[RMDB]
RNA sequence: GGGAACGACUCGAGUAGAGUCGAAAAGUUAUCAGUAGAGUUGGGGUUUGAAUUCCAUUCUUCUGGAUUCAAAUCUAAGCUCUCCCUCUGCACAGUUACAUGUGGGCAGGCUGUGCAUGCAUAUCUGUGGCCUGGAGGAGUGGGGUGAGUAACCUUACGAUGAUAACGAAUUCGUUCGUUAUCAUCGAAAAGAAACAACAACAACAAC
Reactivity to DMS in 0.01 (KOAc 150mM, MgCl2 10mM, bicine 150mM(pH8.5), 24C), signal-to-noise 2, nucleotides 027 to 156: g000u000u000a080u000c070a100g030u010a050g010a040g010u000u000g010g000g000g020u000u010u010g000a010a040u000u000c000c020a160u010u020c190u040u000c200u010g000g010a050u010u000c020a010a000a020u000c010u020a040a080g010c020u000c010u000c010c030c030u010c060u000g030c020a040c010a050g040u000u000a050c040a060u000g030u000g020g000g030c060a200g000g020c060u010g050u010g010c000a060u010g040c060a090u000a060u000c040u000g000u000g010g000c040c040u000g020g000a080g010g000a080g050u000g020g000g030g020u000g000a120g020u000a070a100c050c020u000u000a250
Reactivity to 2A3 in 0.01 (KOAc 150mM, MgCl2 10mM, bicine 150mM(pH8.5), 24C), signal-to-noise 4, nucleotides 027 to 156: g060u090u090a090u190c070a020g050u110a000g030a030g030u290u100g060g030g010g010u020u000u000g020a020a010u300u130c030c000a030u190u080c080u190u040c080u080g000g000a010u000u010c000a000a000a000u000c010u030a030a030g000c000u000c000u020c000c000c000u010c010u020g000c000a020c000a020g000u060u140a100c050a110u180g000u080g060g000g010c020a010g020g000c000u020g010u010g010c020a010u060g020c010a060u090a060u200c030u060g090u060g050g020c000c040u020g000g030a030g000g020a040g020u090g020g000g000g000u030g020a030g020u030a020a040c010c010u030u040a040